[RMDB]
RNA sequence: GGGAACGACUCGAGUAGAGUCGAAAAGAAGGUCGAGUGCACGACCAGAGAGUGCGGUGAGCGACCGACAAAGAGUUCGAAUCGGAACGAACGACCGCAAACGAUCGACUGAAGAUCGAAGUGAGAAGGAUAGUGGUGAGUUCGCUCACCACUAUCCAAAAGAAACAACAACAACAAC
Reactivity to DMS in 0.01 (KOAc 150mM, MgCl2 10mM, bicine 150mM(pH8.5), 24C), signal-to-noise 3, nucleotides 027 to 126: g030a260a140g020g000u000c020g000a150g000u010g020c100a070c000g010a060c060c050a220g010a130g000a120g000u010g010c000g000g000u000g000a060g000c020g010a070c000c000g000a180c160a090a050a160g000a170g030u000u020c050g020a110a100u000c020g000g000a130a100c020g000a020a050c050g000a040c030c010g000c040a080a120a260c030g030a030u030c010g000a110c180u030g040a070a200g010a030u000c000g000a120a130g030u010g000a110g010a040a130
Reactivity to 2A3 in 0.01 (KOAc 150mM, MgCl2 10mM, bicine 150mM(pH8.5), 24C), signal-to-noise 3, nucleotides 027 to 126: g050a070a060g000g020u020c020g010a040g110u190g140c030a010c050g040a080c000c020a030g030a010g010a020g060u260g060c010g020g010u040g050a160g000c000g010a000c000c010g000a010c050a020a140a000g110a030g000u070u160c080g050a080a050u060c030g070g030a040a120c000g000a060a000c010g050a030c010c020g020c030a080a050a130c000g010a000u000c000g090a060c200u210g080a050a000g020a030u000c000g020a050a020g130u120g050a150g000a150a110
Structure probing data (DMS and 2A3) for a 177-nucleotide construct.
The RNA was probed in 150 mM KOAc, 10 mM MgCl2 and 150 mM bicine (pH 8.5) at 24 C.
The DMS profile rests on 2,774 reads.